[RMDB]
RNA sequence: GGGAACGACUCGAGUAGAGUCGAAAAAUACCAUGAUGUCGAUUCAUCUGAAAUGGCCUUCAAAAUUGCUGCAUCAUUAGCACUUAAAGAAGCUGCUAAAAAAUGUGAUCCUGUAAUCUUAGAACCACGACGUCCGUAUUUUCGAAUACGGACGUCGAAAAGAAACAACAACAACAAC
Reactivity to 2A3 in 0.01 (KOAc 150mM, MgCl2 10mM, bicine 150mM(pH8.5), 24C), signal-to-noise 1, nucleotides 027 to 126: a000u160a070c000c000a000u110g000a000u030g000u050c040g080a040u000u120c060a100u000c020u050g130a040a020a030u120g000g090c080c090u180u090c010a000a000a010a300u120u140g000c020u020g000c030a000u000c000a000u190u000a000g000c000a000c000u090u050a150a300a000g210a030a000g060c010u010g000c010u020a000a000a000a000a150a150u170g000u190g000a050u020c020c060u000g020u130a020a000u010c000u000u100a050g000a090a020c000c010a000

Chemical mapping of a 177-nucleotide RNA with 2A3. The RNA was probed in 150 mM KOAc, 10 mM MgCl2 and 150 mM bicine (pH 8.5) at 24 C.